An RNA of 177 nucleotides, treated with DMS and 2A3 and read out base by base. The 2A3 profile rests on 7,688 reads. DMS adducts were read by reverse transcription with MarathonRT. For DMS, 2,824 sequencing reads were counted. The reactions ran in a buffer of 150 mM KOAc, 10 mM MgCl2 and 150 mM bicine (pH 8.5), at 24 C.
[RMDB]
RNA sequence: GGGAACGACUCGAGUAGAGUCGAAAAGGUAUCCACUUCGGUGGAUACCAAAGGCGAUCCCAGCAUCAGGGAACAACAACAAUAGAUGCAUGCCUAACGCCAAAAUUCCGGAUUUCGAUCCGGAAAAUCAAUACGUUCCAUUCGUGGAACGUAUUGAAAAAGAAACAACAACAACAAC
Reactivity to DMS in 0.01 (KOAc 150mM, MgCl2 10mM, bicine 150mM(pH8.5), 24C), signal-to-noise 3, nucleotides 027 to 126: g020g000u000a000u000c000c000a020c000u000u010c200g020g040u000g000g000a000u000a000c000c000a000a040a070g010g010c020g000a140u000c010c000c000a100g000c010a030u010c020a110g000g010g000a090a100c100a120a070c130a070a100c130a110a060u030a060g010a020u010g000c030a030u000g010c020c020u010a130a180c030g000c010c040a030a070a110a170u000u000c000c010g000g000a020u000u000u020c170g020a010u000c000c000g010g000a000a010a030a090
Reactivity to 2A3 in 0.01 (KOAc 150mM, MgCl2 10mM, bicine 150mM(pH8.5), 24C), signal-to-noise 4, nucleotides 027 to 126: g010g000u000a000u000c000c000a010c000u040u070c200g100g000u000g000g000a000u000a000c000c000a000a060a000g000g010c010g010a040u030c000c010c000a010g010c010a000u020c010a030g100g040g150a130a120c050a060a020c010a030a010c020a110a190u080a150g080a050u050g010c040a010u060g000c010c010u050a060a020c020g010c010c000a080a080a000a030u050u020c010c000g000g010a020u030u050u120c150g050a010u040c010c000g000g000a030a000a010a010